[RMDB]
RNA sequence: GGGAACGACUCGAGUAGAGUCGAAAAUGCGCUUGCCCUUGCCCAGCUUGGAGAUGUGCACCAGGCCAUCGCGACCGGGCAGCAGCGCCACAAAGGCACCGAAGUCGGUCGUCUUGACCACCGUGCCGAUAGCGCACGGAUUCGUCCGUGCGCUAUCAAAAGAAACAACAACAACAAC
Reactivity to 2A3 in 0.01 (KOAc 150mM, MgCl2 10mM, bicine 150mM(pH8.5), 24C), signal-to-noise 8, nucleotides 027 to 126: u110g030c010g010c030u070u160g010c030c030c020u050u120g000c010c020c010a060g030c090u050u080g050g010a170g020a110u100g110u190g090c030a060c060c090a150g170g090c000c000a050u030c030g000c010g070a030c030c050g000g010g000c000a000g000c020a000g000c000g000c000c010a070c020a050a220a030g010g000c020a010c020c130g090a130a060g070u150c170g010g000u010c020g080u090c160u160u300g010a000c000c000a010c000c010g000u010g000c000c000
Reactivity to DMS in 0.01 (KOAc 150mM, MgCl2 10mM, bicine 150mM(pH8.5), 24C), signal-to-noise 4, nucleotides 027 to 126: u020g010c000g000c010u050u100g050c010c190c110u010u000g000c010c040c050a070g030c180u000u000g010g010a300g010a020u000g020u030g020c020a180c200c180a070g000g000c000c020a020u010c100g010c190g030a050c090c040g010g000g010c010a060g000c030a030g020c020g030c000c130a070c150a050a080a130g000g020c000a000c110c160g000a140a120g000u000c180g020g020u000c030g000u040c230u080u030g000a000c000c020a050c040c140g000u000g000c020c000